[RMDB]
RNA sequence: GGGAACGACUCGAGUAGAGUCGAAAAAUAGUGUUAUUCGUAACACUAUAUAUCCGAACUCAAGGAUUCGUUCCAGAGACUUGCAUGCUAGCAUGAAAGCAACUGAACAAGCGUUCGCGCUUGUUAAGCAAUAAUGUUUUUUCGAAAACAUUAUUGCAAAAGAAACAACAACAACAAC
Reactivity to DMS in 0.01 (KOAc 150mM, MgCl2 10mM, bicine 150mM(pH8.5), 24C), signal-to-noise 9, nucleotides 027 to 126: a020u000a000g010u000g010u000u000a020u000u010c180g020u000a010a010c000a010c000u000a000u000a050u010a110u000c130c010g010a090a060c010u000c010a080a180g000g000a030u000u000c010g010u000u000c000c000a090g010a090g010a100c010u000u000g000c000a010u000g000c050u010a120g010c010a010u000g000a030a020a020g010c030a110a080c120u010g010a030a020c010a010a010g000c000g020u000u010c220g020c020g020c000u000u000g010u000u000a040a130
Reactivity to 2A3 in 0.01 (KOAc 150mM, MgCl2 10mM, bicine 150mM(pH8.5), 24C), signal-to-noise 9, nucleotides 027 to 126: a000u000a000g000u010g000u010u000a030u040u060c220g030u040a010a000c000a000c000u000a000u000a000u000a010u010c060c030g020a180a070c000u010c020a040a050g120g000a020u020u000c010g000u010u000c000c000a010g020a010g010a210c040u040u050g010c010a020u030g020c010u080a060g040c000a030u030g030a040a010a000g010c030a050a080c060u150g050a020a000c020a010a010g000c000g020u060u090c250g000c000g000c060u010u010g000u010u020a030a010